This 177-nucleotide RNA was probed chemically with 2A3. Reactivities are given for positions 27 through 126. Reactivities are rounded to 0.1 and cut off at 0 and 3. For 2A3 the reverse transcriptase was SuperScript II with manganese. The reactions ran in a buffer of 150 mM KOAc, 10 mM MgCl2 and 150 mM bicine (pH 8.5), at 24 C. The data come from the RNA Mapping Database (RMDB), library RFM100.
[RMDB]
RNA sequence: GGGAACGACUCGAGUAGAGUCGAAAAUGAUCGCUCACCAAGUAUUUAGCGGGAUUCUACCCUGUUCGUUCCGCCCGCGCGUGAUCGCGAUUGUGUCGAACCGUAACCCACUAUAGACGCUCCAGGAAUUCUGCGGUUGGUUCGCCAACCGCAGAAUAAAAGAAACAACAACAACAAC
Reactivity to 2A3 in 0.01 (KOAc 150mM, MgCl2 10mM, bicine 150mM(pH8.5), 24C), signal-to-noise 2, nucleotides 027 to 126: u100g000a010u080c000g000c050u040c020a070c030c040a020a100g030u060a080u050u210u140a040g000c040g020g030g000a010u040u050c040u040a050c010c040c000u020g030u060u060c010g000u020u000c030c010g060c020c000c000g010c000g030c000g090u110g030a080u120c020g010c050g050a020u110u040g000u040g020u010c000g070a050a040c000c030g040u060a050a000c040c000c000a080c010u060a060u060a110g050a030c040g000c000u040c000c000a000g050g030a070